[RMDB]
RNA sequence: GGGAACGACUCGAGUAGAGUCGAAAAGAUAUGGAUCGGAAGUGGAGCGGAACGAGAUAGAGCAAUGUUACUCGGAAACGAGUAAUGACUCUAUCUCGUUCCGAACUACUCCACCCGAUCCUAAGUCCCUAGAAAUCAAGUUCGCUUGAUUUCUAGGAAAAGAAACAACAACAACAAC
Reactivity to DMS in 0.01 (KOAc 150mM, MgCl2 10mM, bicine 150mM(pH8.5), 24C), signal-to-noise 4, nucleotides 027 to 126: g020a130u010a300u010g000g010a010u010c010g000g010a120a130g050u000g010g010a010g010c010g010g000a020a010c010g010a010g010a030u000a000g000a010g010c120a100a070u000g010u000u000a020c000u000c000g000g000a130a130a250c010g000a010g000u010a000a010u010g000a080c000u000c000u000a000u000c000u000c000g010u000u000c000c000g000a010a020c090u020a300c000u000c000c000a020c010c000c010g000a010u000c000c000u000a020a080g000u000c050
Chemical mapping of a 177-nucleotide RNA with DMS. For DMS, 5,893 sequencing reads were counted. The data come from the RNA Mapping Database (RMDB), library TTRINS.